[RMDB]
RNA sequence: GGGAACGACUCGAGUAGAGUCGAAAAUACUAUCCUACUGUGGGAGAAAUCCUUGCCAUUUCCUCAGAAUAAAACACUACCAGUGUCUAGGCUGUGGUACUUUUGUGCCUAUUAGUAAGACGAACAAGUACCAGCAUAGUUUCGACUAUGCUGGUACAAAAGAAACAACAACAACAAC
Reactivity to 2A3 in 0.01 (KOAc 150mM, MgCl2 10mM, bicine 150mM(pH8.5), 24C), signal-to-noise 2, nucleotides 027 to 126: u070a010c040u060a070u050c000c010u000a060c060u090g040u120g040g030g010a060g000a030a070a020u000c020c010u010u060g030c000c000a050u040u070u020c000c000u020c030a020g110a170a060u190a060a090a050a020c040a020c040u160a100c020c100a040g010u000g020u130c010u030a040g080g030c000u010g000u020g060g020u040a040c020u090u190u090u210g050u070g030c000c010u030a050u140u000a030g050u000a000a040g070a010c060g010a080a030c050a110a000
Reactivity to DMS in 0.01 (KOAc 150mM, MgCl2 10mM, bicine 150mM(pH8.5), 24C), signal-to-noise 2, nucleotides 027 to 126: u000a100c120u000a040u000c020c010u010a080c110u000g030u020g010g010g000a070g020a080a070a140u000c040c040u000u000g030c040c050a080u000u010u000c020c000u020c100a070g000a090a070u010a040a130a100a080c060a050c050u000a100c130c110a070g010u000g010u010c020u000a070g040g030c040u000g020u010g000g040u000a030c070u020u000u010u000g000u000g000c000c010u010a110u020u050a050g010u000a030a050g000a050c030g000a110a110c200a070a110
An RNA of 177 nucleotides, treated with 2A3 and DMS and read out base by base. Source: RMDB library OK2TRN, as collected in RNAgym. The 2A3 profile rests on 1,668 reads. The reactions ran in a buffer of 150 mM KOAc, 10 mM MgCl2 and 150 mM bicine (pH 8.5), at 24 C. Reactivities are given for positions 27 through 126. DMS adducts were read by reverse transcription with MarathonRT.